Annotation
Structure probing data (2A3 and DMS) for a 177-nucleotide construct. The DMS profile rests on 33,889 reads. Conditions: 150 mM KOAc, 10 mM MgCl2 and 150 mM bicine (pH 8.5), 24 C.
[RMDB]
RNA sequence: GGGAACGACUCGAGUAGAGUCGAAAAAGCAGUCCCACCAAUAGUAGCCAAUGCUUGUUGCAUGUCUUCGAUCGAAGCGUUAGACAAGUUAGCGGUUUGAGUCAGAAUGGCAGCUGCUCUUUGAGGGGAUUAAAGAAGAAUUCGUUCUUCUUUAAUCAAAAGAAACAACAACAACAAC
Reactivity to 2A3 in 0.01 (KOAc 150mM, MgCl2 10mM, bicine 150mM(pH8.5), 24C), signal-to-noise 9, nucleotides 027 to 126: a000g050c030a010g040u020c030c010c010a010c010c010a050a060u120a120g140u080a020g020c010c020a070a050u100g000c020u020u040g040u060u050g040c060a030u060g040u040c010u030u010c040g300a300u110c140g010a030a000g010c010g020u030u030a050g010a040c010a030a010g040u100u070a030g030c030g030g000u020u020u060g020a020g050u070c050a020g040a180a140u080g040g000c020a010g010c010u020g000c000u010c000u070u060u070g070a080g010g030g030
Reactivity to DMS in 0.01 (KOAc 150mM, MgCl2 10mM, bicine 150mM(pH8.5), 24C), signal-to-noise 9, nucleotides 027 to 126: a070g010c080a070g010u000c030c020c010a200c100c060a040a070u010a080g020u000a070g010c020c070a080a220u000g000c010u000u000g010u000u000g010c220a040u000g000u010c010u010u000c010g000a150u010c190g010a020a020g010c020g010u000u010a240g010a030c030a020a030g000u000u000a050g010c280g000g010u000u000u000g010a090g010u010c090a090g010a080a080u000g010g010c190a080g000c020u000g010c020u000c050u000u000u000g010a100g010g000g010
The data come from the RNA Mapping Database (RMDB), library OK2TST.